RNA sequence: GGGAACGACUCGAGUAGAGUCGAAAAGAUAGCGACAUUAUUAUGCCAAGGAUUAGACAAAUAACGACAGUCCCACUAAUUCUAUCGCUUUGUUAUCCACUUUAUUACGAUUGGGCUGACGAAAUUAAAUGGAUUUUAUGUUCGCAUAAAAUCCAUUAAAAGAAACAACAACAACAAC
Reactivity to 2A3 in 0.01 (KOAc 150mM, MgCl2 10mM, bicine 150mM(pH8.5), 24C), signal-to-noise 5, nucleotides 027 to 126: g080a020u050a020g020c020g030a020c010a000u040u210a100u280u110a050u300g010c030c040a050a050g000g010a010u030u020a010g020a090c060a020a120a080u150a210a020c050g040a010c020a010g090u140c000c010c000a030c000u010a020a020u020u000c010u020a080u040c010g000c000u060u060u060g090u070u050a060u030c010c010a090c050u140u220u090a190u180u170a130c110g080a140u030u090g010g000g000c010u020g000a020c020g040a030a040a100u170u230a090
Reactivity to DMS in 0.01 (KOAc 150mM, MgCl2 10mM, bicine 150mM(pH8.5), 24C), signal-to-noise 5, nucleotides 027 to 126: g010a070u000a040g020c040g010a070c090a030u000u000a070u010u000a070u010g010c090c070a110a080g000g000a040u000u000a050g010a210c140a030a060a060u000a070a100c080g010a150c060a040g010u000c010c010c050a130c070u000a020a030u000u000c020u010a090u000c040g010c040u000u000u010g020u000u010a090u010c020c040a090c160u000u010u010a060u020u000a120c120g000a110u000u000g010g000g000c020u000g010a090c060g010a090a050a090u000u000a040
Annotation:
This 177-nucleotide RNA was probed chemically with 2A3 and DMS. It was measured as part of the RMDB library OK2TST. For DMS the reverse transcriptase was MarathonRT. The RNA was probed in 150 mM KOAc, 10 mM MgCl2 and 150 mM bicine (pH 8.5) at 24 C. For 2A3 the reverse transcriptase was SuperScript II with manganese.